[RMDB]
RNA sequence: GGGAACGACUCGAGUAGAGUCGAAAAGAUAUGGAGCAGCUACCCACCGAACUACAGAGAAGGGUCGGAAACGACCCGGAUCUGCGAGGCUGCUCCUAAGUCAAAGACAUUACUUCGGUAAUGUCAACUAUAUUUAGAGGUUCGCCUCUAAAUAUAGAAAAGAAACAACAACAACAAC
Reactivity to DMS in 0.01 (KOAc 150mM, MgCl2 10mM, bicine 150mM(pH8.5), 24C), signal-to-noise 6, nucleotides 027 to 126: g020a120u000a140u010g010g010a020g010c010a010g010c020u000a140c020c040c040a300c110c040g000a080a040c050u010a170c000a030g000a010g010a300a220g000g000g020u000c000g010g000a060a060a160c010g000a010c010c000c000g000g000a290u000c010u000g010c020g000a070g020g010c000u000g010c010u000c000c000u000a010a060g020u000c130a040a120a080g000a010c000a010u000u000a000c000u000u010c160g030g000u000a000a000u000g000u000c000a060a150
Reactivity to 2A3 in 0.01 (KOAc 150mM, MgCl2 10mM, bicine 150mM(pH8.5), 24C), signal-to-noise 3, nucleotides 027 to 126: g070a020u250a190u300g000g000a010g020c000a000g010c010u080a240c030c020c060a010c040c030g010a050a080c090u290a080c220a020g020a010g000a030a030g000g010g000u000c020g030g030a070a060a020c000g000a000c040c010c020g010g000a010u000c000u000g000c020g000a010g000g020c000u000g000c010u020c000c000u000a020a010g080u070c090a120a080a120g000a000c010a010u000u020a020c020u060u140c300g080g000u010a020a000u000g000u010c000a000a000

The data come from the RNA Mapping Database (RMDB), library TTRDEL. The record gives the reactivity of an RNA of 177 nucleotides to DMS and 2A3. 2A3 adducts were read by reverse transcription with SuperScript II with manganese. Conditions: 150 mM KOAc, 10 mM MgCl2 and 150 mM bicine (pH 8.5), 24 C.